Structure probing data (DMS and 2A3) for a 177-nucleotide construct. For 2A3, 16,863 sequencing reads were counted. For 2A3 the reverse transcriptase was SuperScript II with manganese. The DMS profile rests on 12,362 reads. 2A3 is a SHAPE reagent: it acylates the 2'-hydroxyl of flexible nucleotides of all four kinds. Values cover nucleotides 27 to 126. The RNA was probed in 150 mM KOAc, 10 mM MgCl2 and 150 mM bicine (pH 8.5) at 24 C.
RNA sequence: GGGAACGACUCGAGUAGAGUCGAAAAUUUUGAGCUUUCGAGCUCAAAACAACUGGUGUCCCGACCAGGAAAAACACAUUUACACGAAGUGAAAGAUCGAAAGGGCCACCAUGUUCGCAUGGUGGAAAUCACGACUAUUAUUCGUAAUAGUCGUGAUAAAAGAAACAACAACAACAAC
Reactivity to DMS in 0.01 (KOAc 150mM, MgCl2 10mM, bicine 150mM(pH8.5), 24C), signal-to-noise 7, nucleotides 027 to 126: u000u000u000u000g000a010g010c000u000u000u010c180g010a020g020c000u000c000a000a010a010a040c240a100a120c020u000g000g000u000g000u000c000c000c000g000a120c000c000a010g010g010a020a040a060a070a070c070a040c080a100u000u010u010a100c130a130c110g010a070a070g000u000g000a110a090a110g000a060u010c030g010a040a070a080g010g000g000c000c000a010c000c000a000u000g010u000u010c190g010c010a010u000g010g010u000g000g000a000a030
Reactivity to 2A3 in 0.01 (KOAc 150mM, MgCl2 10mM, bicine 150mM(pH8.5), 24C), signal-to-noise 8, nucleotides 027 to 126: u020u010u000u010g000a010g000c010u050u030u190c270g080a010g000c000u010c000a000a000a000a010c020a050a120c000u000g000g000u010g030u020c000c000c010g010a010c000c010a010g050g040a030a070a000a040a000c060a000c010a070u100u150u250a120c160a030c140g090a140a020g030u050g110a140a070a030g070a080u120c060g040a100a040a020g040g030g000c000c000a000c020c000a000u010g020u020u040c190g000c110a000u000g000g000u000g000g040a020a000